[RMDB]
Structure probing data (2A3 and DMS) for a 177-nucleotide construct.
For 2A3 the reverse transcriptase was SuperScript II with manganese.
The RNA was probed in 150 mM KOAc, 10 mM MgCl2 and 150 mM bicine (pH 8.5) at 24 C.
Source: RMDB library OK2TST, as collected in RNAgym.
RNA sequence: GGGAACGACUCGAGUAGAGUCGAAAAUCUGCGGUGGGUCCGGAGUUCUAUCGCAACUCCAUCUUCGAACAGCCCCUGGAUCGGAGGGUCCUGUGUGAGCCAUCCGCCUGGGACUUUUGCAAUCGUAUCAUACCCGGGUAUUCGUACCCGGGUAUGAAAAAGAAACAACAACAACAAC
Reactivity to 2A3 in 0.01 (KOAc 150mM, MgCl2 10mM, bicine 150mM(pH8.5), 24C), signal-to-noise 1, nucleotides 027 to 126: u000c010u040g030c000g020g070u100g010g100g040u090c180c120g020g000a080g000u020u040c080u160a240u230c100g030c070a040a040c020u000c030c000a040u000c040u120u110c030g110a130a110c010a020g000c000c000c000c040u040g010g030a070u160c000g030g000a020g050g020g080u040c000c100u080g100u040g080u110g130a050g100c000c000a120u000c030c030g020c080c010u000g000g000g070a040c040u090u100u050u070g100c030a060a120u060c040g090u130a080
Reactivity to DMS in 0.01 (KOAc 150mM, MgCl2 10mM, bicine 150mM(pH8.5), 24C), signal-to-noise 1, nucleotides 027 to 126: u000c080u000g010c060g030g030u000g010g030g040u020c120c080g010g010a050g010u000u000c030u000a150u010c190g010c130a000a070c030u010c000c010a110u010c060u000u020c060g000a020a080c150a030g010c070c000c010c030u010g020g000a110u000c020g000g030a020g000g010g010u010c040c020u020g010u000g020u020g000a090g010c000c030a060u000c010c020g010c010c010u000g010g010g010a030c010u000u000u000u000g000c170a110a080u010c070g000u010a170